[RMDB]
RNA sequence: GGGAACGACUCGAGUAGAGUCGAAAAAAAGCAUGAAGAUAUAGAAUACCAGAAUGUAUUCUGGGUCUACUUACAGUAUAUAGAAAAACUGUAUAAAGACCUUACAGGACACAUGCUUGACAGUUAUAGCGGGCAUUCUUCGGAAUGCCCAAAAGAAACAACAACAACAAC
Reactivity to DMS in 0.01 (KOAc 150mM, MgCl2 10mM, bicine 150mM(pH8.5), 24C), signal-to-noise 2, nucleotides 027 to 129: a300a000a000g040c020a000u000g000a000a030g000a100u020a130u140a060g000a150a000u040a000c040c300a000g000a140a190u100g050u020a030u040u030c020u000g000g010g120u010c030u070a030c300u010u010a030c000a040g000u000a050u000a300u000a080g020a100a040a060a120a040c010u030g000u080a000u000a000a120a020g020a020c000c000u000u000a130c230a070g020g090a130c150a160c000a080u000g000c000u000u000g000a040c300a110g000u020u010a030u090a010g000c300